[RMDB]
RNA sequence: GGGAACGACUCGAGUAGAGUCGAAAAAUCCGUGGAUAUCGGGUGCGCCCCGCUCCUCCUCCGGCUGUUCUCCUUCACAGCUAUGACCCAUGCGCCGCACAGGCAGUGUCCCGCUUCGUGUGCAAAAAAAACCGCCAGUACUUCGGUACUGGCGGAACAGACACAUAGACUUCGGUCUAUGUGUCUGAAAAGAAACAACAACAACAAC
Reactivity to 2A3 in 0.01 (KOAc 150mM, MgCl2 10mM, bicine 150mM(pH8.5), 24C), signal-to-noise 1, nucleotides 027 to 156: a020u060c020c000g020u040g010g030a150u130a100u300c010g000g040g010u030g050c100g090c010c000c020c000g000c020u030c000c010u000c020c020u060c030c050g050g000c010u020g020u040u050c040u130c050c040u060u020c050a000c000a020g000c010u050a070u170g090a060c030c000c030a070u100g050c040g010c010c010g000c010a010c030a030g000g070c000a000g000u020g050u050c000c020c010g010c010u030u090c090g180u030g000u010g040c050a040a000a000a000a000a000a000a220c000c000g000c010c000a000g000u000a000c000u010u130c240g070g000u000a000c000u000g010g030c020g010g000a000a000